The record gives the reactivity of an RNA of 207 nucleotides to 2A3. For 2A3 the reverse transcriptase was SuperScript II with manganese. As a SHAPE reagent, 2A3 marks flexible, mostly unpaired nucleotides at the ribose 2'-OH. For 2A3, 582 sequencing reads were counted. The RNA was probed in 150 mM KOAc, 10 mM MgCl2 and 150 mM bicine (pH 8.5) at 24 C.

[RMDB]
RNA sequence: GGGAACGACUCGAGUAGAGUCGAAAAGGGCCAUGUACCUAUCCAAAAUGAGAUCCCAUCUUGCACACUGUGCUAAUUUGAGAUUCUUAUGCCUCCUACUUGGAGAGAUCUGGACUAGAAGUCAGGGAAUAGGUCGUUUCUUUCGAGAAACGACCAAGGUAACUCUCCUGUUCGCAGGAGAGUUACCAAAAGAAACAACAACAACAAC
Reactivity to 2A3 in 0.01 (KOAc 150mM, MgCl2 10mM, bicine 150mM(pH8.5), 24C), signal-to-noise 2, nucleotides 027 to 156: g060g000g010c020c030a150u190g000u130a020c020c030u020a010u010c010c020a080a090a010a110u130g000a020g000a070u030c030c010c000a010u010c010u000u060g020c000a040c010a050c150u260g000u020g030c010u080a000a120u000u000u110g060a050g000a010u150u100c040u050u060a020u150g080c000c010u050c010c000u070a220c100u110u140g020g000a010g000a000g010a110u000c020u060g040g000a030c040u030a050g060a220a040g020u080c040a020g040g040g020a000a100u080a260g020g030u000c010g000u000u000u000c090u040u050u070c130g170a040g000a010a000a000c010g000a000c000c010a000a000